Overview: Source: RMDB library OK1LIB, as collected in RNAgym. The record gives the reactivity of an RNA of 177 nucleotides to DMS and 2A3. Reactivities are given for positions 27 through 126. For DMS the reverse transcriptase was MarathonRT. The DMS profile rests on 1,527 reads.
RNA sequence: GGGAACGACUCGAGUAGAGUCGAAAAGCUCGGAGACGAGCAAGGCUGACAAAACAAUGUCCCAACCUCCACGUGGUGUCGGCUGGAUAAUGCUGCAUUAUGUUGCAUUUAUCAACUGGGAAACAAAGGCCGAUAUAUAGUUCGCUAUAUAUCGGCCAAAAGAAACAACAACAACAAC
Reactivity to DMS in 0.01 (KOAc 150mM, MgCl2 10mM, bicine 150mM(pH8.5), 24C), signal-to-noise 1, nucleotides 027 to 126: g010c030u040c010g000g000a210g000a290c000g000a040g000c000a050a000g010g010c010u010g040a000c050a040a140a130a040c230a070a130u000g000u010c040c030c000a210a040c010c020u000c020c010a130c150g000u030g020g000u000g010u000c000g000g010c010u020g000g020a050u000a010a030u030g000c000u030g010c000a170u010u100a120u060g050u000u000g050c000a000u000u050u000a010u000c000a100a100c140u000g000g010g000a050a130a000c190a040a110a020
Reactivity to 2A3 in 0.01 (KOAc 150mM, MgCl2 10mM, bicine 150mM(pH8.5), 24C), signal-to-noise 3, nucleotides 027 to 126: g000c010u010c010g020g010a110g010a060c010g000a000g010c000a010a040g010g000c000u010g000a020c020a010a080a050a030c040a010a150u100g030u040c020c000c000a000a020c000c010u030c020c040a150c140g080u110g010g000u030g000u030c010g020g000c040u040g030g000a000u000a000a000u000g010c010u030g000c020a060u090u160a130u300g040u010u010g000c010a000u060u060u110a030u040c020a010a040c040u050g000g000g000a080a030a030c060a060a090a040